Chemical mapping of a 177-nucleotide RNA with 2A3 and DMS.
The DMS profile rests on 2,071 reads.
Source: RMDB library OK2TST, as collected in RNAgym.
For DMS the reverse transcriptase was MarathonRT.
Values are in units of 0.01, from 0 to 300, in steps of 10.
Conditions: 150 mM KOAc, 10 mM MgCl2 and 150 mM bicine (pH 8.5), 24 C.

RNA sequence: GGGAACGACUCGAGUAGAGUCGAAAAGAUCUUAAUGGGGUGCCAACAAUGCUUGUUUUUGAAGAUUGGAGAUGUGAUUUGAGAUAUUGUCUCUACGCACCCUUGAUUCAAGGUGACCAACUGAAGCGUACGCACAGAGAUUCGUCUCUGUGCGUACAAAAGAAACAACAACAACAAC
Reactivity to 2A3 in 0.01 (KOAc 150mM, MgCl2 10mM, bicine 150mM(pH8.5), 24C), signal-to-noise 2, nucleotides 027 to 126: g030a010u000c000u070u100a060a030u100g010g020g010g020u020g010c000c000a000a030c000a070a040u150g150c070u150u050g080u130u290u130u130u180g080a030a010g020a070u050u110g040g010a120g030a050u040g030u050g120a150u030u120u220g090a050g000a030u080a130u120u210g050u010c000u020c010u020a030c050g000c000a000c040c090c030u010u060g020a020u060u040c020a000a000g000g030u040g020a080c000c030a000a080c070u140g060a060a020g070c040
Reactivity to DMS in 0.01 (KOAc 150mM, MgCl2 10mM, bicine 150mM(pH8.5), 24C), signal-to-noise 3, nucleotides 027 to 126: g000a020u000c020u000u000a050a090u000g000g010g020g050u000g010c010c110a090a170c100a030a070u000g010c090u000u000g000u010u000u020u010u010g010a060a060g000a090u000u010g020g010a080g000a070u000g010u020g010a170u010u020u000g000a080g010a090u000a100u000u010g000u010c000u000c010u010a110c290g020c000a010c000c010c000u000u020g000a140u010u000c110a040a060g000g010u000g030a200c030c040a030a100c210u010g000a040a120g000c180